[RMDB]
RNA sequence: GGGAACGACUCGAGUAGAGUCGAAAAAGUCCCAGCUACACAGAAGGCUGAGGUGGGAGGAUCGCUUGAGCCUUGGAGGUUGAGGCUGCAAUGAGCCAUGAUUGUGCCUCUGCACUCUAGCUCGGGCUCAUGCUACCCUAUUCGUAGGGUAGCAUGAAAAAGAAACAACAACAACAAC
Reactivity to DMS in 0.01 (KOAc 150mM, MgCl2 10mM, bicine 150mM(pH8.5), 24C), signal-to-noise 5, nucleotides 027 to 126: a110g010u000c010c000c010a100g010c060u010a070c100a100c160a110g000a080a070g010g000c040u010g000a060g000g020u000g000g000g010a080g020g000a080u010c080g010c020u000u000g000a020g000c040c080u000u010g010g000a010g010g010u000u000g000a020g000g010c020u010g020c020a020a010u000g000a110g020c110c180a080u000g000a030u000u000g010u000g000c010c010u000c010u000g010c040a070c010u000c020u000a060g000c020u000c070g030g000g000c040
Reactivity to 2A3 in 0.01 (KOAc 150mM, MgCl2 10mM, bicine 150mM(pH8.5), 24C), signal-to-noise 4, nucleotides 027 to 126: a000g080u040c000c000c000a000g010c010u080a020c080a000c020a120g190a230a040g080g010c050u040g040a020g060g070u060g010g030g000a090g050g030a080u130c040g000c030u020u010g060a000g000c000c000u060u120g000g010a010g010g010u050u050g000a010g020g020c060u140g000c040a020a020u060g020a040g170c090c050a100u200g030a040u090u040g000u030g000c010c000u000c020u020g000c260a300c040u000c010u000a010g010c000u020c020g020g000g000c010